[RMDB]
RNA sequence: GGGAACGACUCGAGUAGAGUCGAAAAUUUGAUGUGACGAUCCUUUCCCCAAAUUACCGACUUUGAUUAUACUGUGCGAUUUUUCGAGUUCUGUCUCCUCGGAGAUGGCUCUUAAGCCAGAUAUUCUGUACCUGGCUUCAUUCGUGAAGCCAGGUACAAAAGAAACAACAACAACAAC
Reactivity to 2A3 in 0.01 (KOAc 150mM, MgCl2 10mM, bicine 150mM(pH8.5), 24C), signal-to-noise 2, nucleotides 027 to 126: u160u090u050g040a030u140g130u090g000a020c060g090a090u060c000c000u020u000u000c000c000c060c000a060a200a010u130u150a140c010c010g030a070c080u070u090u050g110a090u120u050a020u040a190c030u040g130u090g190c010g080a180u090u000u000u110u300c050g010a020g030u210u060c010u070g100u020c000u000c040c000u000c070g020g000a030g000a030u030g040g000c000u000c010u060u070a040a030g000c000c000a010g000a100u080a070u130u070c050u030